An RNA of 207 nucleotides, treated with DMS and 2A3 and read out base by base. For DMS, 1,776 sequencing reads were counted. Reactivities are given for positions 27 through 156. Conditions: 150 mM KOAc, 10 mM MgCl2 and 150 mM bicine (pH 8.5), 24 C. 2A3 adducts were read by reverse transcription with SuperScript II with manganese.
RNA sequence: GGGAACGACUCGAGUAGAGUCGAAAAAAACAAGCAAAGGACUUGGCCUGACUUCCGCUUUUAAAGAUCUCUUUGGCUGUGUGUGAAGAACAGGCUGUCAAGGAGCAUAGAGAAAGCUGGGGGAUUGGUUAGAACGCUAACUUAGUUGCCCCAGCAACUUUUCUGAUCUUUUCGAAGAUCAGAAAAGAAAAGAAACAACAACAACAAC
Reactivity to DMS in 0.01 (KOAc 150mM, MgCl2 10mM, bicine 150mM(pH8.5), 24C), signal-to-noise 1, nucleotides 027 to 156: a080a120a070c040a010a090g000c020a140a140a090g000g000a140c010u000u000g010g020c060c020u000g010a160c030u010u000c000c010g020c040u000u000u000u000a080a040a120g000a050u000c020u010c120u000u000u020g030g000c060u000g010u020g010u000g000u010g010a050a120g010a120a010c020a060g010g000c000u000g010u000c010a010a060g020g010a070g010c050a100u010a080g010a140g000a080a050a040g010c000u000g000g070g040g000g020a150u000u020g000g020u020u000a050g010a210a130c250g040c020u000a030a010c020u000u020a080g000u000u000g010c000c000c000c000a090g040c000a020a020
Reactivity to 2A3 in 0.01 (KOAc 150mM, MgCl2 10mM, bicine 150mM(pH8.5), 24C), signal-to-noise 2, nucleotides 027 to 156: a000a000a000c080a070a010g050c140a150a000a020g060g030a020c010u080u090g080g020c000c000u030g050a020c010u020u030c010c000g060c050u120u160u040u160a080a190a050g080a170u070c060u000c000u050u040u030g030g010c030u030g040u030g010u010g010u010g060a020a170g020a180a020c000a000g040g020c010u000g010u020c000a040a000g000g020a020g020c020a050u130a030g070a010g050a080a140a050g010c000u000g010g000g000g010g020a010u020u020g020g000u000u000a010g020a190a010c030g040c260u000a010a010c010u060u170a050g070u080u050g150c000c000c000c000a020g010c000a000a000